This 177-nucleotide RNA was probed chemically with 2A3. 2A3 adducts were read by reverse transcription with SuperScript II with manganese. The reactions ran in a buffer of 150 mM KOAc, 10 mM MgCl2 and 150 mM bicine (pH 8.5), at 24 C. It was measured as part of the RMDB library RFM100. For 2A3, 673 sequencing reads were counted.
RNA sequence: GGGAACGACUCGAGUAGAGUCGAAAAUGGAGAUGUCUAGUGAGGUAGAGCGACCGAUUGGGUGGCCAGCAGUAGAAAUACUGCACCACUUUGUCAAACUCCGAACUUGCUAGAAUCGAAGAUACCACAGUUGUUUGGACUUCGGUCCAAACAACUGAAAAGAAACAACAACAACAAC
Reactivity to 2A3 in 0.01 (KOAc 150mM, MgCl2 10mM, bicine 150mM(pH8.5), 24C), signal-to-noise 1, nucleotides 027 to 126: u060g060g000a160g010a000u090g120u130c000u030a000g000u000g000a020g030g070u060a010g050a000g000c040g000a040c140c000g020a000u000u160g020g020g000u020g000g010c040c020a040g000c000a010g000u000a010g020a030a010a020u030a000c000u000g020c000a030c000c000a010c000u030u000u040g030u000c000a000a000a250c050u040c060c050g050a080a070c000u000u010g000c000u000a000g030a000a000u000c020g000a000a000g010a000u080a050c020c000a010